RNA sequence: GGGAACGACUCGAGUAGAGUCGAAAAACUGCUAAGUUCAAUGUAACUAAAGCAGAUGUUAAAGAAGCUAAUAUGAACAUUACAGCUAUUAACAUCACUUACGGUGAUGAUGAAACCAUAACUGUAACCUACUCGUGGGAUUCGUCCCACGAGUAGGAAAAGAAACAACAACAACAAC
Reactivity to 2A3 in 0.01 (KOAc 150mM, MgCl2 10mM, bicine 150mM(pH8.5), 24C), signal-to-noise 3, nucleotides 027 to 126: a000c020u010g000c000u020a040a000g000u000u000c110a140a190u300g110u150a110a010c000u010a020a120a000g000c040a000g010a040u020g010u020u090a170a050a100g060a190a010g000c000u010a070a000u160a100u240g200a100a060c020a140u020u060a030c000a020g000c020u000a050u030u070a050a010c000a010u020c000a000c000u000u220a000c190g040g010u090g000a010u010g060a050u140g080a080a010a030c110c040a010u000a040a020c000u000g020u010a020a020
Reactivity to DMS in 0.01 (KOAc 150mM, MgCl2 10mM, bicine 150mM(pH8.5), 24C), signal-to-noise 2, nucleotides 027 to 126: a200c000u000g000c000u000a120a010g000u000u000c020a240a100u050g000u000a000a020c000u000a020a150a000g000c030a000g000a140u000g000u060u000a080a110a080g000a090a240g000c100u000a020a100u000a020u020g040a110a120c290a260u000u000a000c140a110g030c060u000a040u000u000a010a050c000a010u000c020a080c080u000u020a010c300g000g000u000g010a010u020g000a100u040g030a040a030a070c170c100a010u000a060a010c000u000g000u000a040a080